Overview: Conditions: 150 mM KOAc, 10 mM MgCl2 and 150 mM bicine (pH 8.5), 24 C. Chemical mapping of a 177-nucleotide RNA with DMS and 2A3. For 2A3, 877 sequencing reads were counted.

[RMDB]
RNA sequence: GGGAACGACUCGAGUAGAGUCGAAAAUAGUUCGUGACGUGUGAAAAAUAAAAGAAGGUGACAGAAACAAGGAAAAAAUAUUUAUAAACAACUUAACGAGUGCGCAACGUCUCAUUAUUUUGAAAUGACUCGUACAGUAAUUCGUUACUGUACGAGUAAAAGAAACAACAACAACAAC
Reactivity to DMS in 0.01 (KOAc 150mM, MgCl2 10mM, bicine 150mM(pH8.5), 24C), signal-to-noise 2, nucleotides 027 to 126: u010a090g010u010u010c120g060u010g010a020c040g050u000g010u020g000a020a040a040a070a150u010a060a040a100a060g010a050a070g000g020u000g000a050c210a070g000a040a020a050c080a100a140g070g010a020a020a090a080a060a060u030a100u030u010u010a210u010a110a050a140c020a050a060c050u000u000a050a060c060g000a080g050u000g010c090g000c060a080a050c080g010u010c030u000c040a010u010u010a060u000u000u000u000g010a110a050a050u000g000
Reactivity to 2A3 in 0.01 (KOAc 150mM, MgCl2 10mM, bicine 150mM(pH8.5), 24C), signal-to-noise 1, nucleotides 027 to 126: u080a030g030u010u010c130g000u020g000a030c050g020u000g000u000g130a020a000a040a070a110u090a000a140a010a000g070a040a020g030g000u010g050a010c300a050g080a070a080a000c040a040a070g300g030a070a140a010a060a070a040u230a210u050u070u040a280u220a050a010a010c000a000a010c060u010u040a020a020c030g000a010g040u040g070c040g000c020a070a050c010g040u020c000u020c030a010u000u090a040u010u080u010u060g110a070a110a030u070g040
Source: RMDB library OK2TRN, as collected in RNAgym.